The record gives the reactivity of an RNA of 207 nucleotides to DMS. For DMS the reverse transcriptase was MarathonRT.

RNA sequence: GGGAACGACUCGAGUAGAGUCGAAAACCUCAGGAGUUCGCUCCUGAGGAAAAACCGUAGGGUAGCUAUAAUCUGGAGAUUCCGUCUUCGAAAGAGGACGAGAUCGAUGAAAGGUAGCUACCCUAAACGGAAAAAGAGGUAGGUUCGCCUACCUCAAGUUAUGCACAUCGUUCGCGAUGUGCAUAACAAAAGAAACAACAACAACAAC
Reactivity to DMS in 0.01 (KOAc 150mM, MgCl2 10mM, bicine 150mM(pH8.5), 24C), signal-to-noise 1, nucleotides 027 to 156: c030c000u000c000a030g040g010a020g010u000u000c300g000c010u030c020c000u000g040a000g020g010a000a000a040a050a050c000c000g050u000a060g010g010g040u000a000g000c030u010a040u020a140a300u000c000u030g040g020a300g010a010u000u000c000c000g120u000c000u000u000c010g000a260a100a300g000a050g020g010a030c000g020a020g020a000u000c000g010a300u030g000a010a080a150g010g060u000a120g030c010u000a000c000c000c010u000a000a010a010c030g020g010a040a050a050a160a060g000a070g050g010u000a010g010g000u000u000c180g050c050c000u000a020c040c000u000c010a000a080